[RMDB]
RNA sequence: GGGAACGACUCGAGUAGAGUCGAAAAUGUGGUUCCUUCGGGAACCACACACUACCGAGAAUGAUCCUCGGUAUAUAAAUCAAACCCUUGGAAACAACGGAACACUCCCUAGCUUCGGCUAGGGAAACGAUUACCGUGAGUUCGCUCACGGUAAUCGAAAAGAAACAACAACAACAAC
Reactivity to DMS in 0.01 (KOAc 150mM, MgCl2 10mM, bicine 150mM(pH8.5), 24C), signal-to-noise 1, nucleotides 027 to 126: u010g010u000g000g020u000u000c000c000u000u000c240g000g010g000a000a020c000c000a000c000a000c200a090c180u000a000c000c020g000a020g000a140a080u000g000a140u020c080c040u000c020g010g020u000a000u000a040u000a050a050a020u030c200a110a050a240c010c000c050u010u000g020g000a110a090a130c040a070a030c100g020g000a080a020c090a140c130u000c010c000c000u010a020g020c000u000u010c160g040g000c000u000a000g000g000g010a010a000a070